[RMDB]
RNA sequence: GGGAACGACUCGAGUAGAGUCGAAAAUGAUCGAGAGAUCUAACGAUGUACGCGAGUCAACCGCACAGACUCGAGCGAAAGCUCGGUCGAAAGACCGCGUACAUCGGUCGGCAAGUGUGCAGUCAAAAUCCUGAUCGCGUUUCGACGCGAUCAGGAUAAAAGAAACAACAACAACAAC
Reactivity to DMS in 0.01 (KOAc 150mM, MgCl2 10mM, bicine 150mM(pH8.5), 24C), signal-to-noise 1, nucleotides 027 to 126: u020g010a030u010c010g010a210g000a210g030a010u000c030u020a080a180c000g000a000u030g000u000a010c000g010c010g010a070g010u000c000a090a130c000c100g010c140a090c040a140g020a010c000u000c030g030a030g000c000g000a130a070a120g010c010u000c000g010g000u000c010g010a040a050a160g000a000c000c000g010c000g000u000a000c010a000u000c000g000g000u000c120g010g000c100a020a100g030u000g030u000g000c000a100g010u010c020a100a120a180